Annotation: Chemical mapping of a 177-nucleotide RNA with DMS and 2A3. DMS adducts were read by reverse transcription with MarathonRT. Source: RMDB libraries RFM100 and RFMREP, as collected in RNAgym. Conditions: 150 mM KOAc, 10 mM MgCl2 and 150 mM bicine (pH 8.5), 24 C.
RNA sequence: GGGAACGACUCGAGUAGAGUCGAAAAGGAAGGCAGAGGGUUUUGCUUGGAUCUCUUGGCUGACCACGUGGCCAUACGUUCAACACUCCAGGAUGCCUGUUCCUGGAGCCAGACAGAAAAUGAGUUACUCGAUUACUUUUUUCGAAAAGUAAUCGAGAAAAGAAACAACAACAACAAC
Reactivity to DMS in 0.01 (KOAc 150mM, MgCl2 10mM, bicine 150mM(pH8.5), 24C), signal-to-noise 6, nucleotides 027 to 126: g010g010a110a100g010g010c040a040g010a100g000g010g020u010u010u020u010g010c080u010u010g010g000a080u010c060u020c040u000u010g000g020c020u010g010a200c040c060a090c110g020u010g010g000c040c040a040u000a070c110g010u010u000c040a060a100c280a260c010u000c030c010a020g000g000a040u020g000c080c080u010g000u030u000c000c000u000g000g010a010g010c050c060a120g010a050c090a100g000a040a040a070a050u030g000a100g010u010u020a160
Reactivity to 2A3 in 0.01 (KOAc 150mM, MgCl2 10mM, bicine 150mM(pH8.5), 24C), signal-to-noise 8, nucleotides 027 to 126: g050g020a010a050g030g010c040a010g050a110g070g030g000u030u070u120u120g060c030u040u080g040g040a080u020c050u000c000u080u040g030g000c020u030g040a080c020c010a050c090g060u070g030g000c000c000a050u060a090c060g030u040u060c020a040a010c020a020c050u000c000c000a000g000g020a020u090g090c030c050u040g100u050u010c000c000u000g000g000a000g000c020c000a040g010a050c030a020g120a060a120a020a050u160g020a050g070u050u060a040